An RNA of 207 nucleotides, treated with 2A3 and read out base by base. Source: RMDB library RNAMAK, as collected in RNAgym. For 2A3, 1,884 sequencing reads were counted.

RNA sequence: GGGAACGACUCGAGUAGAGUCGAAAAGAUAUGGAUCUGGCGAACAGUUUCGCUUUGAUCUAUGUAACAAGUAUAUCGGAAACGAUAUACCGCCCAUAGGGAGCGAAACGGGAUCCUAAGUCAAACAUCUAAAUCAACUUCGGUUGAUUUAGAUGAAGCUGUCAAGGAGAUUCGUCUCCUUGACAGCAAAAGAAACAACAACAACAAC
Reactivity to 2A3 in 0.01 (KOAc 150mM, MgCl2 10mM, bicine 150mM(pH8.5), 24C), signal-to-noise 1, nucleotides 027 to 156: g020a010u040a040u050g000g000a000u000c010u040g150g150c110g070a120a040c120a080g020u020u020u000c020g000c010u220u070u030g040a040u060c000u010a000u010g040u030a110a110c060a090a060g000u000a000u000a000u000c000g040g000a090a040a080c020g010a000u000a000u010a010c010c000g070c000c000c000a000u000a000g020g000g000a020g000c010g000a020a000a000c020g020g000g000a000u030c000c000u010a080a000g040u030c040a040a040a110c000a000u000c000u000a000a000a000u000c000a000a010c020u040u060c200g140g000u010u000g010a000u000u020u020a000g000a000u010g000a010a020